The record gives the reactivity of an RNA of 207 nucleotides to DMS and 2A3.

RNA sequence: GGGAACGACUCGAGUAGAGUCGAAAAGCCAAGUUAUGUUGCAAGGUAACGCUAUCACUGGUUUGUUAUUCUUGCUCGGUAUUGGUUUAAGUUCGCCUACUAUGCUGCUUGGCAGCAUUCUGGCAACAAUAUCAGGCUUAGCGGUCGCUAAAUUAUGCUGCUGAUAGUUGUUCGCAACUAUCAGCAGAAAAGAAACAACAACAACAAC
Reactivity to DMS in 0.01 (KOAc 150mM, MgCl2 10mM, bicine 150mM(pH8.5), 24C), signal-to-noise 1, nucleotides 027 to 156: g020c020c010a020a180g000u010u020a140u000g000u000u020g020c010a070a060g010g000u010a020a030c080g000c010u000a070u000c270a120c160u010g010g000u000u000u000g010u010u000a060u010u000c010u000u000g000c020u000c080g010g010u000a070u000u000g010g020u000u000u030a060a110g010u000u010c140g020c010c000u000a060c030u000a020u000g020c000u010g010c000u010u020g060g000c000a030g040c000a040u000u010c020u020g000g010c010a090a070c020a040a050u010a010u000c020a170g010g020c080u000u000a100g020c060g050g000u000c040g000c000u000a100a070a100u000u000a080u000g010
Reactivity to 2A3 in 0.01 (KOAc 150mM, MgCl2 10mM, bicine 150mM(pH8.5), 24C), signal-to-noise 4, nucleotides 027 to 156: g000c000c000a020a020g100u160u090a150u220g210u180u050g050c020a010a010g000g000u030a020a000c010g030c030u060a070u260c130a130c270u200g050g010u130u190u200g040u040u020a070u180u190c010u000u020g000c020u010c020g000g020u080a080u040u070g100g070u030u070u150a090a070g030u050u060c120g010c010c000u030a060c050u020a010u020g000c000u000g040c040u170u300g220g000c010a000g000c000a000u010u000c030u020g000g000c010a020a010c000a010a000u030a040u090c080a060g060g000c000u060u040a010g000c010g060g120u120c120g020c070u080a050a070a050u250u210a130u300g050
The reactions ran in a buffer of 150 mM KOAc, 10 mM MgCl2 and 150 mM bicine (pH 8.5), at 24 C.